[RMDB]
RNA sequence: GGGAACGACUCGAGUAGAGUCGAAAAGAUAUUGGCCUCCUCGCUGGCGGCAUCCACAGCGCAGGUCUCGGUAAGAUCGGGCAGAUCUCCACUGCCCGCCCAACCGGCGGAUCACCUGGUGCCGCCACGUCGGAUAUCGGUUCGCCGAUAUCCGACGAAAAGAAACAACAACAACAAC
Reactivity to 2A3 in 0.01 (KOAc 150mM, MgCl2 10mM, bicine 150mM(pH8.5), 24C), signal-to-noise 1, nucleotides 027 to 126: g040a010u130a080u140u210g100g000c000c020u030c000c000u060c000g080c060u030g020g000c000g000g010c000a060u060c030c020a110c050a070g060c040g030c210a170g000g000u010c030u030c010g040g000u070a080a070g010a100u100c000g010g000g000c000a000g010a130u120c080u030c180c040a050c010u010g000c000c000c030g000c010c000c000a050a030c010c010g050g070c190g080g000a020u020c000a040c030c000u000g000g000u000g010c000c010g030c020c000a000
Reactivity to DMS in 0.01 (KOAc 150mM, MgCl2 10mM, bicine 150mM(pH8.5), 24C), signal-to-noise 2, nucleotides 027 to 126: g000a100u010a130u000u000g030g000c020c030u000c030c000u000c100g010c160u020g010g000c000g000g000c000a030u020c010c130a060c090a110g010c100g040c130a120g090g000u000c010u000c050g000g000u000a050a080g000a080u000c000g010g000g000c000a000g000a110u010c110u000c140c130a130c000u000g000c000c000c000g010c060c020c060a170a090c000c010g000g000c140g000g000a040u000c030a200c050c020u000g000g000u000g010c010c010g000c020c000a030